[RMDB]
RNA sequence: GGGAACGACUCGAGUAGAGUCGAAAACAAGGUCGGUGGAUAGCAGCCCUAUCAAUAUCUAGGAGAACUGUGCUAUGUUUAGAAGAUUAGGUAGUCUCUAAACAGAACAAUUUACCUGCUGAACAAAAAAAUCCAAUGGCGUUCGCGCCAUUGGAAAGUUUAUGUUAUCGUUCGCGAUAACAUAAACAAAAGAAACAACAACAACAAC
Reactivity to 2A3 in 0.01 (KOAc 150mM, MgCl2 10mM, bicine 150mM(pH8.5), 24C), signal-to-noise 4, nucleotides 027 to 156: c030a070a030g040g020u040c030g010g030u040g010g020a050u040a060g000c010a000g020c020c010c000u050a060u120c080a100a110u100a070u230c050u080a020g000g040a080g020a100a090c030u030g010u010g040c030u050a030u080g000u010u010u000a100g010a300a020g000a060u050u050a060g110g050u100a010g020u020c000u000c000u020a020a010a010c010a010g030a070a010c030a050a030u050u080u050a020c000c000u010g040c060u100g060a110a040c070a040a090a020a030a010a000a030u010c000c000a000a000u000g000g000c000g020u040u020c100g010c000g000c020c010a000u000u000g000g000a010a000a000
Reactivity to DMS in 0.01 (KOAc 150mM, MgCl2 10mM, bicine 150mM(pH8.5), 24C), signal-to-noise 2, nucleotides 027 to 156: c040a110a130g010g000u000c060g000g040u000g010g000a100u000a080g000c040a080g000c070c010c010u000a160u000c070a070a180u000a090u000c170u000a050g020g010a270g020a060a070c020u000g010u010g000c060u010a110u000g000u000u000u010a010g000a070a090g030a060u000u000a110g030g030u010a120g000u000c020u010c000u000a000a040a030c000a040g010a080a080c030a030a060u000u000u010a070c050c010u000g000c040u000g010a030a110c100a010a000a030a090a110a080a230u000c000c000a000a000u010g010g050c020g020u000u000c300g010c030g000c000c000a020u000u000g020g010a030a000a030